[RMDB]
RNA sequence: GGGAACGACUCGAGUAGAGUCGAAAACAUCAGGAGGACCUUCCGCGCACUUCCAAGCAGGAGCUUUCCUUCCAAGCGCACUUCCAAUCUACUCGAGAGGAGGAGGAGGAGGAGGAUUCGCACAAAAAUAAUGCCUAUGUUUCGACAUAGGCAUUAUAAAAGAAACAACAACAACAAC
Reactivity to DMS in 0.01 (KOAc 150mM, MgCl2 10mM, bicine 150mM(pH8.5), 24C), signal-to-noise 4, nucleotides 027 to 126: c100a090u010c140a130g000g020a090g020g000a100c300c050u000u000c020c020g030c060g000c070a100c080u000u010c090c090a070a110g010c070a120g010g010a050g010c130u000u010u010c010c010u000u000c010c050a080a100g000c090g000c110a080c060u000u000c020c020a160a130u010c000u000a040c050u010c030g000a030g000a230g000g000a050g020g000a070g000g010a080g000g000a100g000g000a050g000g020a080u000u000c040g010c080a070c180a020a070a060a110
Reactivity to 2A3 in 0.01 (KOAc 150mM, MgCl2 10mM, bicine 150mM(pH8.5), 24C), signal-to-noise 1, nucleotides 027 to 126: c040a090u170c040a000g050g030a020g000g000a020c010c000u050u050c030c060g000c010g010c080a050c000u190u040c060c010a040a050g040c010a030g010g070a030g000c050u080u130u090c010c010u120u070c000c040a050a050g100c020g010c040a020c020u050u000c040c010a030a100u080c010u060a040c010u040c040g060a040g010a040g140g020a050g030g020a060g000g000a020g000g000a030g010g030a020g020g000a050u110u060c030g000c050a030c070a110a130a000a010